Source: RMDB library M2PK90, as collected in RNAgym.
Chemical mapping of a 177-nucleotide RNA with DMS.
The RNA was probed in 150 mM KOAc, 10 mM MgCl2 and 150 mM bicine (pH 8.5) at 24 C.
For DMS the reverse transcriptase was MarathonRT.
[RMDB]
RNA sequence: GGGAACGACUCGAGUAGAGUCGAAAAAAAAAGGAACUUCCCGGCAAAUCCUCCUGUCAGGUGCUUGCGCUCAAAUUUGCCAGAUGCGUAAUCGCGAAAAAGUUCCAUUAAUGAGAGGUGGAAAAAAGAUUACAUCUGGAUUCGUCCAGAUGUAAUCAAAAGAAACAACAACAACAAC
Reactivity to DMS in 0.01 (KOAc 150mM, MgCl2 10mM, bicine 150mM(pH8.5), 24C), signal-to-noise 1, nucleotides 027 to 126: a010a010a050a090a050g000g000a010a000c060u000u000c010c020c000g030g000c160a100a090a060u000c010c010u000c000c030u020g010u000c040a070g040g050u000g000c100u000u000g000c020g030c000u000c030a100a100a100u000u000u000g020c110c150a080g000a090u030g000c030g000u000a050a020u000c060g010c020g000a030a040a100a060a080g000u010u020c020c010a080u000u000a080a020u020g000a030g020a020g010g000u010g000g000a000a030a070a050a060a080
The DMS profile rests on 853 reads.